[RMDB]
RNA sequence: GGGAACGACUCGAGUAGAGUCGAAAAGUGUCGAAGAUCGAAGCUACCUUUUCCCGGAGUCCGGUAGCGAGAUCGAGAUACGAGAGGACGACGGGUAUCGGAUGACGUGUAAGCUUUACCCGUCCCGCUUACACGUUAUCCUUGAGGGACGGGAUGACAUGCAUACUAUCUUCGGAUAGUAUGCAUGAAAAGAAACAACAACAACAAC
Reactivity to DMS in 0.01 (KOAc 150mM, MgCl2 10mM, bicine 150mM(pH8.5), 24C), signal-to-noise 3, nucleotides 027 to 156: g020u010g020u000c020g020a170a170g000a040u010c010g020a190a300g000c010u000a010c000c000u000u000u010u000c010c020c050g030g010a200g020u000c060c070g030g040u000a020g120c010g020a220g010a050u010c010g000a300g020a050u000a030c010g010a200g010a070g000g010a070c020g020a130c040g010g030g010u000a050u010c100g010g020a100u000g010a000c020g060u000g060u000a030a050g000c040u000u000u000a070c100c000c050g000u000c030c030c040g020c010u010u010a040c030a040c030g000u010u000a030u000c030c010u010u010g010a080g000g010g010a140c020g000g010g010a130u010g010a210
Reactivity to 2A3 in 0.01 (KOAc 150mM, MgCl2 10mM, bicine 150mM(pH8.5), 24C), signal-to-noise 5, nucleotides 027 to 156: g040u030g000u030c020g090a150a030g000a030u030c020g050a110a010g000c000u000a010c000c000u050u080u090u150c030c020c030g030g020a080g040u080c080c050g000g010u010a000g000c000g000a010g000a020u020c020g010a000g010a030u040a020c020g010a010g020a020g070g010a020c010g010a010c030g010g030g000u080a110u180c090g030g030a080u110g020a050c000g000u010g000u000a000a010g010c020u120u100u180a170c020c020c000g010u020c000c000c000g000c000u000u000a000c000a000c000g000u000u030a060u090c000c010u020u100g050a030g000g010g000a010c030g010g000g010a010u050g020a010